Description
This 207-nucleotide RNA was probed chemically with DMS and 2A3.

[RMDB]
RNA sequence: GGGAACGACUCGAGUAGAGUCGAAAAUUAUUCAUAAUUGCCCCAAACUGGAAACAAUUCAGAUGUCAGACUGCCCAGUGAAUAAACAAACUGGAACAUCCAUACUGUGGAAUAUUAGUUAGCAGUGAAAAAGGAUGAAUGAUGGAUACCACACCACCGGUGCUUAUAUGUUCGCAUAUAAGCACCGAAAAGAAACAACAACAACAAC
Reactivity to DMS in 0.01 (KOAc 150mM, MgCl2 10mM, bicine 150mM(pH8.5), 24C), signal-to-noise 1, nucleotides 027 to 156: u010u010a080u000u000c040a060u000a010a090u000u020g010c000c000c090c020a070a140a140c030u030g010g000a130a090a070c050a130a140u000u000c040a100g010a100u010g020u000c060a120g010a060c070u000g000c220c000c010a070g030u020g020a110a230u000a080a130a030c100a110a180a070c090u010g020g010a090a060c050a050u030c000c000a100u000a090c000u000g010u000g020g000a070a080u000a040u000u000a110g000u000u000a230g000c000a030g000u000g000a030a030a040a080a160g020g000a080u000g000a070a070u000g000a080u050g020g000a260u000a070c000c020a010c020a140c120c000a110c110
Reactivity to 2A3 in 0.01 (KOAc 150mM, MgCl2 10mM, bicine 150mM(pH8.5), 24C), signal-to-noise 2, nucleotides 027 to 156: u070u040a040u050u020c030a020u060a300a140u120u080g050c000c000c000c010a060a070a010c050u020g040g030a060a140a080c040a060a080u080u020c010a020g030a070u160g030u040c010a020g040a120c070u030g010c020c000c000a010g000u020g050a070a030u120a110a110a030c070a060a130a000c000u010g000g010a050a020c010a010u000c010c000a000u010a150c050u040g040u020g030g090a040a060u110a110u100u090a040g090u030u080a040g020c010a000g020u020g050a030a000a050a030a020g040g020a020u010g020a040a000u060g010a040u040g020g000a010u060a070c000c070a000c010a020c130c070a010c230
The reactions ran in a buffer of 150 mM KOAc, 10 mM MgCl2 and 150 mM bicine (pH 8.5), at 24 C.
DMS (dimethyl sulfate) methylates the pairing face of unpaired adenines and cytosines.
The data come from the RNA Mapping Database (RMDB), library OK3TST.